Record summary: Structure probing data (2A3 and DMS) for a 177-nucleotide construct. It was measured as part of the RMDB library TTRDEL. Conditions: 150 mM KOAc, 10 mM MgCl2 and 150 mM bicine (pH 8.5), 24 C. Values are in units of 0.01, from 0 to 300, in steps of 10.

RNA sequence: GGGAACGACUCGAGUAGAGUCGAAAAGAUAUGGAGAACACUCCGAGGAUCUGUACACAUUUUCGGAAACGAACCAUGUACAGGGAGGAGAGGUUCUCCUAAGUCAAAACCCAAGUUCGCUUGGGAACUAAUACGUAGUCUUCGGACUACGUAUUAGAAAAGAAACAACAACAACAAC
Reactivity to 2A3 in 0.01 (KOAc 150mM, MgCl2 10mM, bicine 150mM(pH8.5), 24C), signal-to-noise 5, nucleotides 027 to 126: g010a000u020a020u080g000g000a000g000a000a000c000a000c010u000c010c000g030a300g000g000a010u000c000u010g010u060a000c030a010c040a170u110u210u300u290c030g000g020a010a040a010c010g010a010a030c060c030a070u070g000u010a010c000a000g010g020g010a020g050g050a050g050a300g030g020u010u000c000u000c000c000u000a000a000g010u000c000a020a060a060a140c000c000c010a000a010g010u040u160c290g000c170u010u010g000g010g010a040a040
Reactivity to DMS in 0.01 (KOAc 150mM, MgCl2 10mM, bicine 150mM(pH8.5), 24C), signal-to-noise 7, nucleotides 027 to 126: g000a020u000a040u010g010g000a020g010a020a020c010a060c000u000c000c010g010a080g020g000a020u000c010u000g010u000a000c010a050c210a160u000u000u000u000c010g020g010a010a010a030c000g010a050a260c300c210a100u000g000u000a010c000a010g000g010g010a010g010g000a010g010a130g010g000u000u000c000u000c000c000u000a000a050g000u000c020a130a070a100a130c010c000c000a010a010g000u000u000c220g010c020u000u000g000g010g000a070a130